[RMDB]
RNA sequence: GGGAACGACUCGAGUAGAGUCGAAAAGGAGCGGGCCUCCCGAUCCGAGUGGUCCACGGCGUAUCAAGUUUGGAGUCAUCCGGCCGAAGGGUUGAGAUGACCCACAGUCGGGUGAUCCACCAGGAGGAAGGGCCUUAGUUCGCUAAGGCCAAAAGAAACAACAACAACAAC
Reactivity to DMS in 0.01 (KOAc 150mM, MgCl2 10mM, bicine 150mM(pH8.5), 24C), signal-to-noise 7, nucleotides 027 to 129: g000g040a060g020c080g000g010g020c050c040u030c050c030c030g020a090u030c060c040g050a150g050u010g000g000u000c020c050a130c030g000g000c030g000u000a120u070c100a130a100g000u030u020u020g040g000a140g000u020c000a020u000c000c000g010g020c000c000g040a170a110g000g000g000u000u000g000a210g000a110u000g000a020c000c000c000a050c100a090g030u020c000g030g030g030u020g040a060u020c000c000a020c080c050a150g010g010a070g000g000a110a060g020
Reactivity to 2A3 in 0.01 (KOAc 150mM, MgCl2 10mM, bicine 150mM(pH8.5), 24C), signal-to-noise 9, nucleotides 027 to 129: g060g010a030g020c040g010g030g030c000c010u020c010c020c000g010a020u040c030c000g000a030g020u070g000g030u030c040c010a060c050g020g000c050g040u160a080u260c110a120a080g060u080u130u070g050g000a120g070u030c000a000u010c000c000g000g000c000c020g050a150a130g090g000g010u040u030g100a160g020a170u250g050a020c000c000c000a030c000a000g020u030c010g000g000g000u090g020a020u020c000c000a000c010c020a020g000g010a010g000g020a040a090g040